Structure probing data (2A3 and DMS) for a 177-nucleotide construct. For DMS the reverse transcriptase was MarathonRT. The 2A3 profile rests on 1,317 reads. It was measured as part of the RMDB library OK2TRN. Values cover nucleotides 27 to 126.
RNA sequence: GGGAACGACUCGAGUAGAGUCGAAAAAGGCAGGAGAAUCACUUGAACCUGGAAGGCAGAGGUUGCAGUGAGCUGAGAUGGUGUCACUGCACUCCAGCCUGGGCAACAGAGCGAGACUCAAUCUCAAGCACUCUAACUACUUCGGUAGUUAGAGUGCAAAAGAAACAACAACAACAAC
Reactivity to 2A3 in 0.01 (KOAc 150mM, MgCl2 10mM, bicine 150mM(pH8.5), 24C), signal-to-noise 2, nucleotides 027 to 126: a000g140g020c080a040g000g140a030g030a030a070u070c050a020c060u050u080g010a020a020c010c000u020g080g120a060a040g040g040c040a020g020a030g090g070u150u160g000c000a000g000u000g000a010g000c050u070g040a090g080a300u300g100g020u050g090u070c000a000c000u020g000c000a000c000u000c000c030a010g000c010c000u000g000g020g000c060a110a040c000a000g080a010g050c040g050a020g040a020c000u000c020a030a140u040c010u000c040a050a030
Reactivity to DMS in 0.01 (KOAc 150mM, MgCl2 10mM, bicine 150mM(pH8.5), 24C), signal-to-noise 2, nucleotides 027 to 126: a030g010g010c110a110g030g000a070g000a100a170u000c080a040c010u000u000g000a060a080c020c000u000g030g020a110a020g020g000c070a080g010a040g010g030u000u000g010c020a010g020u010g010a250g000c020u030g010a130g020a070u030g020g050u000g000u000c010a010c030u010g010c030a050c040u000c010c020a080g010c020c000u000g010g000g010c080a010a110c110a170g000a120g000c020g020a040g000a150c030u000c040a040a130u000c010u000c000a130a230